The record gives the reactivity of an RNA of 177 nucleotides to DMS.
RNA sequence: GGGAACGACUCGAGUAGAGUCGAAAAUAGGCAAAGAAGGAGCUGCGAUACUGGGACAAUUGAGACCAGACAUGCAAGCUCUUCAUCAGGCAGAAGGGGAAGUGCACGUUAGCCUAGGUACUCGUGCGCUAAGCCCAUAUUUCGAUAUGGGCUUAGCAAAAGAAACAACAACAACAAC
Reactivity to DMS in 0.01 (KOAc 150mM, MgCl2 10mM, bicine 150mM(pH8.5), 24C), signal-to-noise 5, nucleotides 027 to 126: u000a040g000g010c020a150a130a140g010a110a040g000g000a030g010c010u010g000c010g020a160u000a090c010u000g000g000g000a080c070a170a170u010u020g000a140g000a190c000c000a000g010a110c250a130u010g000c010a040a090g000c000u000c000u000u000c060a100u000c140a080g020g020c090a060g000a060a040g000g000g000g030a100a080g020u020g020c010a000c020g010u000u000a120g000c020c020u000a020g010g000u000a060c110u000c010g000u000g000c070